[RMDB]
RNA sequence: GGGAACGACUCGAGUAGAGUCGAAAAGAAAGAAAGAAAGAACCCUGUCCAAGGCUCUUUUCACAUUGUGCUUCUGUCUGUGCCCGACCCAAGCAGUGCAAUGUUAAAAGGGCAUUGGGUGGGUGAAUCUUCUAGUGACUUUCGAGUCACUAGAAGAAAAAGAAACAACAACAACAAC
Reactivity to DMS in 0.01 (KOAc 150mM, MgCl2 10mM, bicine 150mM(pH8.5), 24C), signal-to-noise 2, nucleotides 027 to 126: g000a090a030a080g010a140a140a090g010a110a090a030g010a190a130c070c000c020u010g030u010c000c000a010a010g000g000c000u000c000u000u000u000u000c060a010c000a020u000u000g030u000g000c010u000u000c030u000g030u030c030u020g000u000g000c020c030c010g000a100c020c070c070a150a000g000c070a020g010u010g010c000a000a000u010g010u000u020a010a000a010a020g020g000g040c020a020u000u000g000g000g040u000g010g000g000u000g000a110a070
Reactivity to 2A3 in 0.01 (KOAc 150mM, MgCl2 10mM, bicine 150mM(pH8.5), 24C), signal-to-noise 4, nucleotides 027 to 126: g110a010a070a000g100a040a100a010g100a040a060a010g050a030a040c010c000c010u030g030u000c000c000a000a000g020g000c000u000c000u010u000u000u000c010a000c000a010u000u000g000u020g010c000u010u030c020u020g090u020c030u070g140u150g060c010c040c040g050a080c020c020c020a050a020g000c010a000g010u000g030c000a000a010u000g000u000u010a000a000a000a010g000g000g000c010a010u000u000g000g010g000u020g000g020g000u010g030a020a070

The record gives the reactivity of an RNA of 177 nucleotides to DMS and 2A3.
It was measured as part of the RMDB library RFM100.